[RMDB]
RNA sequence: GGGAACGACUCGAGUAGAGUCGAAAAGGCGAUUGGAAAGCAGAGCAUUCUGCAAAAUGAUUCAAAAAGUUUGUUGAACUUAAACCUCUCCUGACGACUCCUUGCUUCUGAACUGCACUGUUAAAGUCAGCGGACAUCAUUUCGAUGAUGUCCGCUGAAAAGAAACAACAACAACAAC
Reactivity to 2A3 in 0.01 (KOAc 150mM, MgCl2 10mM, bicine 150mM(pH8.5), 24C), signal-to-noise 1, nucleotides 027 to 126: g040g030c020g020a060u090u080g020g000a100a170a060g000c020a020g000a000g020c040a210u050u040c080u000g050c030a050a000a000a090u190g040a060u080u040c170a040a040a040a040a040g060u100u080u070g040u060u070g000a050a020c000u000u060a110a000a000c000c000u100c000u010c040c000u010g020a020c000g000a000c000u000c000c000u030u040g000c010u010u000c050u080g050a060a000c040u040g000c000a050c040u030g060u050u080a090a120a000g040u000